[RMDB]
RNA sequence: GGGAACGACUCGAGUAGAGUCGAAAAGAAGCACGGCUUGUGUGUGAUCCUUUUGGAUUGCACUGUAUAUCCUACGCUGUGCGAACGUAGGACCAUUGUGGCGAGAGCCACUUACAGUACAGCUUAUUAUGACGCAUCGCUGUACGAACGAUGCAGAAUAAUCGGUAUUAUUCGUAAUACCGAUUAUAAAAGAAACAACAACAACAAC
Reactivity to DMS in 0.01 (KOAc 150mM, MgCl2 10mM, bicine 150mM(pH8.5), 24C), signal-to-noise 7, nucleotides 027 to 156: g010a110a160g010c030a080c030g010g010c090u000u000g020u000g030u000g010u000g010a070u010c000c000u000u010u000u020g040g010a080u010u000g020c020a020c010u000g010u000a070u010a110u000c020c000u000a020c020g020c010u000g030u000g010c100g020a040a020c010g020u000a010g000g010a050c070c130a110u010u000g010u000g020g070c000g020a300g010a300g040c000c000a010c010u000u000a020c030a060g010u000a020c030a040g020c080u000u000a150u000u000a120u000g010a150c080g000c010a010u010c040g000c010u010g010u000a160c150g010a040a020c010g010a030u000g010c010a110g010a130
Reactivity to 2A3 in 0.01 (KOAc 150mM, MgCl2 10mM, bicine 150mM(pH8.5), 24C), signal-to-noise 9, nucleotides 027 to 156: g100a030a010g020c020a010c080g040g030c080u190u130g080u020g000u000g010u010g130a000u000c010c000u090u190u200u300g010g000a000u000u000g000c000a000c000u010g090u040a170u030a020u090c020c020u030a020c030g000c030u060g020u060g040c020g010a060a000c020g010u050a040g000g040a020c040c030a120u030u130g000u010g010g000c010g000a050g000a000g040c000c000a000c000u010u050a040c020a010g010u010a020c010a010g000c030u060u040a050u140u110a130u290g130a060c070g000c060a020u050c040g010c020u050g030u090a030c010g000a050a010c040g010a020u070g000c030a010g060a180